An RNA of 177 nucleotides, treated with 2A3 and DMS and read out base by base. Conditions: 150 mM KOAc, 10 mM MgCl2 and 150 mM bicine (pH 8.5), 24 C. Values cover nucleotides 27 to 126. 2A3 adducts were read by reverse transcription with SuperScript II with manganese. The 2A3 profile rests on 2,859 reads.
[RMDB]
RNA sequence: GGGAACGACUCGAGUAGAGUCGAAAAGUAGUGAGGCAACGUCGUCUACGACGUUCCACUAUGAAGCGGUCGGCAGGCUUUGGAAGUACGUGGACGAUGUAGAGUCUGCACGACAUCAACAGGGAUGCCGGCAAGGUUCGUUCGCGAACUUUGCCGGAAAAGAAACAACAACAACAAC
Reactivity to 2A3 in 0.01 (KOAc 150mM, MgCl2 10mM, bicine 150mM(pH8.5), 24C), signal-to-noise 2, nucleotides 027 to 126: g000u040a000g000u000g060a110g050g130c110a030a010c000g000u030c010g050u050c080u160a070c070g010a000c010g080u010u000c000c000a040c000u050a040u090g070a080a000g060c050g010g000u030c000g040g000c020a030g050g000c010u060u090u070g030g030a020a010g030u070a090c040g050u060g110g020a020c050g030a030u030g020u040a020g010a000g030u010c000u000g000c040a040c030g020a000c000a070u100c010a000a070c030a010g050g000g020a040u090g030
Reactivity to DMS in 0.01 (KOAc 150mM, MgCl2 10mM, bicine 150mM(pH8.5), 24C), signal-to-noise 2, nucleotides 027 to 126: g000u000a030g000u000g000a100g000g090c120a050a060c020g000u020c020g010u000c140u000a060c020g000a050c000g000u010u000c000c000a040c150u000a040u010g010a090a040g010c080g050g000u000c020g000g000c000a020g030g010c070u000u000u000g010g000a060a140g000u020a070c060g000u010g000g020a030c050g000a060u020g010u050a030g010a080g000u000c000u000g000c030a040c000g010a080c020a050u000c050a070a050c140a070g040g000g000a090u020g000